[RMDB]
RNA sequence: GGGAACGACUCGAGUAGAGUCGAAAACUGUCCAACGAGUCGGUAGGACCGAUAAACUGGUCGCGGUCCGUCAGGCGCAGCCCUGGUGGACCGCCCGUAUCAGCCAGCAGCCGCUGCAACCCCAGGGUUCCUACGAUCAAUUCGUUGAUCGUAGGAAAAAAGAAACAACAACAACAAC
Reactivity to DMS in 0.01 (KOAc 150mM, MgCl2 10mM, bicine 150mM(pH8.5), 24C), signal-to-noise 5, nucleotides 027 to 126: c090u020g000u000c040c030a120a210c070g010a070g000u000c030g010g010u000a030g000g010a300c040c010g020a060u010a070a120a100c120u020g000g020u010c060g020c000g010g020u000c000c000g000u000c010a000g010g010c050g000c220a070g010c130c010c000u000g000g020u000g000g000a000c010c000g010c030c050c030g010u010a070u010c070a070g020c050c010a050g000c070a100g000c060c020g000c030u010g010c050a090a120c050c010c000c030a100g030g000g020
Reactivity to 2A3 in 0.01 (KOAc 150mM, MgCl2 10mM, bicine 150mM(pH8.5), 24C), signal-to-noise 5, nucleotides 027 to 126: c020u060g080u080c000c000a050a020c030g020a010g080u040c030g030g060u060a040g070g110a020c000c000g020a020u070a050a170a020c060u110g010g020u060c050g000c000g010g000u000c010c000g010u010c000a000g010g000c080g040c190a060g010c030c000c000u010g000g000u010g000g000a000c000c000g010c000c000c000g020u040a060u080c040a010g040c010c000a010g000c000a000g020c030c040g030c020u020g000c020a060a070c010c000c000c010a030g080g000g000
An RNA of 177 nucleotides, treated with DMS and 2A3 and read out base by base. Conditions: 150 mM KOAc, 10 mM MgCl2 and 150 mM bicine (pH 8.5), 24 C. The 2A3 profile rests on 5,384 reads. For 2A3 the reverse transcriptase was SuperScript II with manganese. DMS adducts were read by reverse transcription with MarathonRT. Source: RMDB libraries RFM100 and RFMREP, as collected in RNAgym.